[RMDB]
RNA sequence: GGGAACGACUCGAGUAGAGUCGAAAAGUGAACGAUCUCGGUUGUUUCUCUGAAGGCAUGAUCACCCCGUCCGAUGCGGAAGUUCGUGCUUCCGUCAAACGCGAAAGUCGGACGGCGGCCAUGAGUCAAUAUGUUUAAGGCUUCGGCCUUAAACAAAGCAUGACUACUUAUUCGUAAGUAGUCAUGCAAAAGAAACAACAACAACAAC
Reactivity to DMS in 0.01 (KOAc 150mM, MgCl2 10mM, bicine 150mM(pH8.5), 24C), signal-to-noise 1, nucleotides 027 to 156: g040u000g010a040a090c040g060a050u000c020u010c010g000g040u010u010g020u000u000u000c000u000c040u000g010a100a140g000g020c010a030u000g000a040u000c160a110c030c010c010c000g000u000c020c020g000a040u010g000c000g040g050a010a010g040u030u000c300g020u020g000c000u000u000c010c000g030u020c020a050a050a280c100g030c120g020a120a100a100g070u000c000g000g010a010c030g000g000c020g010g010c020c000a050u000g010a070g000u000c100a130a140u000a140u000g000u000u000u000a000a000g000g020c030u000u000c300g090g030c000c000u020u000a000a010a030c000a030a060a160
Reactivity to 2A3 in 0.01 (KOAc 150mM, MgCl2 10mM, bicine 150mM(pH8.5), 24C), signal-to-noise 5, nucleotides 027 to 156: g200u140g070a120a020c060g040a140u050c030u050c130g040g000u010u000g000u010u010u000c030u030c040u040g080a100a060g140g020c010a010u010g000a020u070c060a020c000c010c000c000g000u000c000c000g000a010u030g010c000g000g020a010a000g000u090u300c200g160u300g050c000u000u000c000c000g010u010c040a110a070a030c140g030c040g140a140a040a010g040u000c000g000g010a010c000g000g000c020g000g000c010c000a020u020g010a010g030u040c030a060a090u080a040u230g000u000u000u000a000a000g000g000c000u020u050c270g100g000c000c000u000u000a010a000a000c000a000a000a020